[RMDB]
RNA sequence: GGGAACGACUCGAGUAGAGUCGAAAAGAAAAUGAGUGCGUCACACUCUGACGAAAAACAAAAUGUCACGAUAGGUGACCUAUCAAAAACAAAAUGGACUGUACGAGUCCCGUACAAAAGAAAGAAAGGGUAUGUAAGAGUUCGCUCUUACAUACCCAAAAGAAACAACAACAACAAC
Reactivity to 2A3 in 0.01 (KOAc 150mM, MgCl2 10mM, bicine 150mM(pH8.5), 24C), signal-to-noise 3, nucleotides 027 to 126: g100a000a050a000a080u090g000a010g010u020g030c080g060u080c000a010c000a000c040u000c010u000g010a010c070g070a020a050a100a080a010c130a010a090a030a060u210g020u000c010a010c120g070a080u060a200g070g040u060g020a050c020c000u090a110u120c030a010a020a020a070a050c060a020a080a070a000u100g120g040a040c050u020g000u030a020c000g020a040g110u070c040c000c000g020u000a000c000a020a120a010a010g180a060a090a050g080a010a130a020
Reactivity to DMS in 0.01 (KOAc 150mM, MgCl2 10mM, bicine 150mM(pH8.5), 24C), signal-to-noise 3, nucleotides 027 to 126: g010a030a110a170a080u010g000a030g050u000g000c200g000u030c060a030c020a040c060u000c010u000g040a160c030g000a030a040a040a200a090c210a090a110a080a060u030g000u000c010a030c250g030a030u020a120g000g000u040g010a060c050c020u010a070u000c030a000a020a080a170a120c130a070a110a030a040u020g000g000a100c090u030g000u020a020c030g000a050g000u000c010c000c050g020u000a020c020a090a050a120a010g030a160a070a050g000a110a090a050